[RMDB]
Record summary:
Chemical mapping of a 177-nucleotide RNA with 2A3 and DMS. The RNA was probed in 150 mM KOAc, 10 mM MgCl2 and 150 mM bicine (pH 8.5) at 24 C. It was measured as part of the RMDB library OK2TRN. DMS (dimethyl sulfate) methylates the pairing face of unpaired adenines and cytosines.

RNA sequence: GGGAACGACUCGAGUAGAGUCGAAAAAAGCUUAAGUAUGGAAAAAUCCUCAAGUAUGAGUCACGAGAUGUUUGGCUCACUGCGUUGGACGACUGGAAAGAAGCUUCAACAGUCGGGACAGCAUCUCCAUUCUAUUGCUAUUCGUAGCAAUAGAAUGAAAAGAAACAACAACAACAAC
Reactivity to 2A3 in 0.01 (KOAc 150mM, MgCl2 10mM, bicine 150mM(pH8.5), 24C), signal-to-noise 9, nucleotides 027 to 126: a000a010g030c050u090u030a090a010g060u110a200u200g050g050a100a090a040a070a130u050c020c010u040c030a040a050g040u060a090u160g050a030g040u040c040a010c120g010a010g000a050u020g050u150u300u050g100g000c000u000c010a010c040u070g020c060g130u070u040g020g030a010c010g010a030c010u020g020g070a030a080a040g060a040a000g030c000u040u030c020a030a030c000a010g030u040c060g010g010g020a020c020a010g000c010a010u000c000u000c020
Reactivity to DMS in 0.01 (KOAc 150mM, MgCl2 10mM, bicine 150mM(pH8.5), 24C), signal-to-noise 9, nucleotides 027 to 126: a060a060g010c030u000u000a060a080g020u010a070u000g010g000a030a070a080a100a090u000c050c010u010c090a080a070g010u010a050u000g010a070g010u000c080a070c140g000a020g010a020u000g010u000u010u000g010g000c000u000c010a020c100u000g020c130g010u000u000g000g000a060c010g000a230c010u000g000g030a070a130a070g000a040a250g000c090u000u000c040a040a080c010a020g010u000c120g010g000g010a040c080a030g000c010a020u000c010u000c020